Structure probing data (DMS and 2A3) for a 177-nucleotide construct. The reactions ran in a buffer of 150 mM KOAc, 10 mM MgCl2 and 150 mM bicine (pH 8.5), at 24 C. It was measured as part of the RMDB library OK2TRN. For DMS the reverse transcriptase was MarathonRT. The 2A3 profile rests on 36,776 reads.
[RMDB]
RNA sequence: GGGAACGACUCGAGUAGAGUCGAAAAAGAACGGUCAUUGGGGUGCUCAGAUUUACGCAGACCAUCGAAGGAUUUGGCUUGGAACUUUCAAAUCCGCUCAUGAAGCCGCUGCUGCUUACGAUAGCGCCUCAUAACUAUGUUUCGACAUAGUUAUGAGAAAAGAAACAACAACAACAAC
Reactivity to DMS in 0.01 (KOAc 150mM, MgCl2 10mM, bicine 150mM(pH8.5), 24C), signal-to-noise 9, nucleotides 027 to 126: a070g010a090a070c080g010g000u010c050a110u000u000g010g010g010g010u000g010c040u000c090a080g010a120u000u000u000a080c170g010c040a050g000a110c070c030a040u000c100g010a090a140g000g000a040u000u000u000g010g010c240u010u010g010g010a080a090c170u000u000u000c040a020a030a040u000c020c010g000c130u000c070a070u000g000a080a110g010c050c050g010c060u000g000c030u000g010c030u000u000a070c140g000a120u000a050g010c040g010c110
Reactivity to 2A3 in 0.01 (KOAc 150mM, MgCl2 10mM, bicine 150mM(pH8.5), 24C), signal-to-noise 9, nucleotides 027 to 126: a000g060a060a010c040g010g030u060c030a070u040u110g040g000g010g020u040g010c010u020c060a070g040a180u080u090u120a060c070g000c020a020g030a110c020c010a020u060c050g030a070a020g010g010a010u020u020u070g030g010c040u040u100g120g060a110a110c040u060u120u040c050a020a030a020u010c010c010g010c030u030c010a040u090g050a040a010g020c020c020g030c040u040g000c020u050g000c010u060u070a050c050g080a090u080a060g020c020g010c010